[RMDB]
RNA sequence: GGGAACGACUCGAGUAGAGUCGAAAAUUAAUGAGUGCGUUAAAUCACAGUCCCCCCGCUAUGGAUUCUGUGGUAACGGCACCCAUCUCUUCUCAAUUGUCAAUGCAGCGCCACAAGGGUUGUUAUUCUUCCACACUGUGUUGUUACCAACCCAAUAUACCAGUUAUGAUUUCGAUCAUAACUGGUAAAAAGAAACAACAACAACAAC
Reactivity to DMS in 0.01 (KOAc 150mM, MgCl2 10mM, bicine 150mM(pH8.5), 24C), signal-to-noise 2, nucleotides 027 to 156: u000u000a050a030u020g000a040g010u000g000c000g030u020u010a080a100a070u000c000a020c050a050g000u010c010c010c040c020c080c130g020c060u000a030u000g040g010a030u000u010c020u000g030u020g020g020u010a050a070c050g020g000c010a020c020c010c000a070u000c060u000c080u000u000c040u000c030a110a090u010u000g010u010c010a080a100u010g020c020a050g040c020g020c050c030a060c050a060a100g000g020g020u000u010g010u000u010a080u000u010c020u000u010c010c060a080c040a060c060u010g020u010g020u010u000g000u010u000a120c080c040a030a050c010c010c010a020a040u000a220
Reactivity to 2A3 in 0.01 (KOAc 150mM, MgCl2 10mM, bicine 150mM(pH8.5), 24C), signal-to-noise 1, nucleotides 027 to 156: u170u080a060a010u020g020a010g040u010g000c000g030u030u140a130a120a130u100c010a000c010a030g120u220c080c050c020c060c030c080g080c300u140a060u060g070g000a020u160u000c020u000g010u000g050g000u030a000a000c010g150g040c000a000c000c020c000a020u030c070u000c000u010u000c000u000c000a030a200u270u070g070u070c010a000a060u060g000c010a030g050c000g000c030c050a070c030a070a030g030g020g020u000u000g000u000u050a040u060u020c020u070u040c050c020a020c010a020c100u000g040u000g000u050u000g020u010u010a050c020c010a010a060c000c000c040a000a000u200a010